[RMDB]
RNA sequence: GGGAACGACUCGAGUAGAGUCGAAAACCUCCCAAGGGAGUCCUCAUGCACGGAGCGCCUGGGUGCGGGAAGACUUUGAUCGCACGGGCACUCGCGGCAGAGACGGGAGCGCACUUCCUGGUGCUCAGCUAACCAGUCAGUUCGCUGACUGGUUAGCAAAAGAAACAACAACAACAAC
Reactivity to 2A3 in 0.01 (KOAc 150mM, MgCl2 10mM, bicine 150mM(pH8.5), 24C), signal-to-noise 1, nucleotides 027 to 126: c000c000u070c000c020c010a090a140g090g000g000a090g010u060c040c020u020c060a230u050g000c040a110c250g020g030a000g020c000g040c000c000u240g280g110g010u030g000c030g040g000g040a050a070g120a180c120u210u200u260g070a120u180c010g010c000a000c000g010g000g000c030a030c030u000c020g140c000g040g000c020a010g010a010g000a010c100g030g050g000a040g000c080g000c000a010c020u060u060c010c040u030g010g000u040g020c020u000c010a020
Reactivity to DMS in 0.01 (KOAc 150mM, MgCl2 10mM, bicine 150mM(pH8.5), 24C), signal-to-noise 1, nucleotides 027 to 126: c090c070u000c010c000c010a190a120g000g030g000a040g010u000c050c020u000c020a090u010g010c000a090c010g020g010a010g020c050g000c020c000u010g030g040g060u000g020c010g000g000g020a120a080g010a150c270u010u000u000g010a160u010c040g000c020a020c010g000g000g000c010a020c000u000c010g020c010g020g000c030a030g000a100g010a100c090g010g010g020a040g000c060g040c070a080c080u020u010c050c020u000g010g010u000g000c060u000c030a170

Conditions: 150 mM KOAc, 10 mM MgCl2 and 150 mM bicine (pH 8.5), 24 C. An RNA of 177 nucleotides, treated with 2A3 and DMS and read out base by base. The 2A3 profile rests on 1,146 reads. 2A3 adducts were read by reverse transcription with SuperScript II with manganese.